The record gives the reactivity of an RNA of 177 nucleotides to DMS and 2A3. It was measured as part of the RMDB libraries RFM100 and RFMREP. Conditions: 150 mM KOAc, 10 mM MgCl2 and 150 mM bicine (pH 8.5), 24 C.

[RMDB]
RNA sequence: GGGAACGACUCGAGUAGAGUCGAAAAGGAUCACCGGUUCAUCACGUCGUUUAUUCGGUUGAUAACGAAACACCGUCCUGCUCAGCGAUAACGUCCUGCAUGCCUGGCGUAUGCUCAUCGUAAACUGUGUAACCUGUGAGUUCGCUCACAGGUUACAAAAAGAAACAACAACAACAAC
Reactivity to DMS in 0.01 (KOAc 150mM, MgCl2 10mM, bicine 150mM(pH8.5), 24C), signal-to-noise 4, nucleotides 027 to 126: g000g010a070u030c060a180c060c020g000g000u020u010c090a080u000c060a090c020g020u000c020g010u010u020u040a100u000u000c030g000g000u000u020g010a050u000a040a050c070g010a050a060a090c220a080c100c050g000u000c010c020u000g000c000u010c040a070g000c050g000a070u040a020a090c120g010u020c010c000u000g000c060a010u020g010c020c030u010g000g010c040g010u010a030u000g010c030u000c040a020u000c050g000u000a050a080a150c080u030g010
Reactivity to 2A3 in 0.01 (KOAc 150mM, MgCl2 10mM, bicine 150mM(pH8.5), 24C), signal-to-noise 5, nucleotides 027 to 126: g090g000a030u040c000a000c060c010g020g030u060u030c020a040u020c000a030c050g050u060c040g010u020u060u060a180u070u060c020g020g020u040u060g040a040u030a080a050c030g050a070a040a000c060a030c010c020g050u050c000c000u010g030c030u020c030a030g000c010g020a040u050a080a020c020g050u050c020c020u020g000c000a040u080g040c010c000u030g050g000c030g010u050a040u070g020c000u010c030a050u020c070g080u070a030a100a120c050u070g010